Conditions: 150 mM KOAc, 10 mM MgCl2 and 150 mM bicine (pH 8.5), 24 C.
Chemical mapping of a 177-nucleotide RNA with DMS.
RNA sequence: GGGAACGACUCGAGUAGAGUCGAAAAGCUUUCCGUUUCGACGGAAAGCAAAGGCAAGUACAUGAGAGAUCAAAGAUCACUCAGAAAAGCCGUACUAAAGUAAAAUCAAUCUGUUCGCAGAUUGAAAUGCCACUAACUCAUUCGUGAGUUAGUGGCAAAAAGAAACAACAACAACAAC
Reactivity to DMS in 0.01 (KOAc 150mM, MgCl2 10mM, bicine 150mM(pH8.5), 24C), signal-to-noise 1, nucleotides 027 to 126: g040c000u000u000u010c000c000g000u000u000u000c200g000a000c010g000g000a000a000a000g010c000a010a100a060g000g000c000a070a010g010u020a070c050a110u000g000a020g000a140g020a020u000c020a110a230a270g030a030u000c000a100c000u000c000a060g000a000a120a220a120g020c000c000g030u000a180c110u000a090a050a100g020u010a030a050a150a120u010c010a000a000u010c000u000g010u000u010c130g010c010a000g010a000u000u000g020a000a090a080
DMS adducts were read by reverse transcription with MarathonRT.